[RMDB]
RNA sequence: GGGAACGACUCGAGUAGAGUCGAAAACUGCAGUAUCUCGAGAGAAAAUGUUCUCUUUUGGAAAAUUUACUGAACAGCGUCAACCUUGAAAAACUGGCUGACCACGAAGACGUGUUGACUUGCAGCCCCAUGCUCUGUACUUCGGUACAGAGCAUGGAAAAGAAACAACAACAACAAC
Reactivity to DMS in 0.01 (KOAc 150mM, MgCl2 10mM, bicine 150mM(pH8.5), 24C), signal-to-noise 1, nucleotides 027 to 126: c030u010g010c010a030g010u010a030u020c040u000c240g000a060g030a000g010a030a090a200a180u010g010u050u000c000u000c000u010u010u000u010g080g010a030a090a110a130u010u000u010a050c010u000g010a070a100c030a110g010c060g050u010c060a060a070c000c020u010u010g010a090a070a040a040a140c100u010g020g010c010u000g000a100c000c030a180c100g010a070a040g010a070c070g010u000g010u000u000g000a050c070u000u000g010c000a080g010c030c100
Reactivity to 2A3 in 0.01 (KOAc 150mM, MgCl2 10mM, bicine 150mM(pH8.5), 24C), signal-to-noise 1, nucleotides 027 to 126: c020u000g000c000a000g050u070a030u000c060u020c020g000a010g020a040g070a020a050a110a190u110g110u120u010c000u000c010u000u040u030u040g030g050a070a040a100a010u110u090u060a080c020u030g040a130a010c000a000g030c000g060u010c030a040a040c010c010u060u150g090a120a130a020a020a040c050u010g020g000c000u000g000a070c060c000a040c100g180a120a050g200a040c000g020u020g050u190u190g080a030c020u050u070g000c020a000g000c000c010